[RMDB]
RNA sequence: GGGAACGACUCGAGUAGAGUCGAAAACAGAAUGGCUUUCUCGGCACCUCUGAUUAAGUUUUAAAAUGUGUGGUUUAGCUGUUUUACAGAACUGUUUAAACAAACUUUAAUCUUGAGUUUAGAAAUGGCCUAACGGUACGUUCGCGUACCGUUAGGCAAAAGAAACAACAACAACAAC
Reactivity to 2A3 in 0.01 (KOAc 150mM, MgCl2 10mM, bicine 150mM(pH8.5), 24C), signal-to-noise 2, nucleotides 027 to 126: c000a000g130a140a140u170g040g000c070u220u070u040c070u050c000g030g000c030a000c060c000u010c000u000g000a070u030u040a030a030g030u030u000u060u020a150a130a150a230u160g200u150g050u120g080g030u000u000u020a000g000c000u000g000u000u000u030u230a110c160a120g140a050a000c000u000g070u020u190u190a000a000a000c040a010a000a010c000u090u000u000a000a000u070c000u020u150g050a080g000u010u030u040a090g070a010a040a060u130g050

An RNA of 177 nucleotides, treated with 2A3 and read out base by base.
For 2A3, 566 sequencing reads were counted.
Values are in units of 0.01, from 0 to 300, in steps of 10.
The reactions ran in a buffer of 150 mM KOAc, 10 mM MgCl2 and 150 mM bicine (pH 8.5), at 24 C.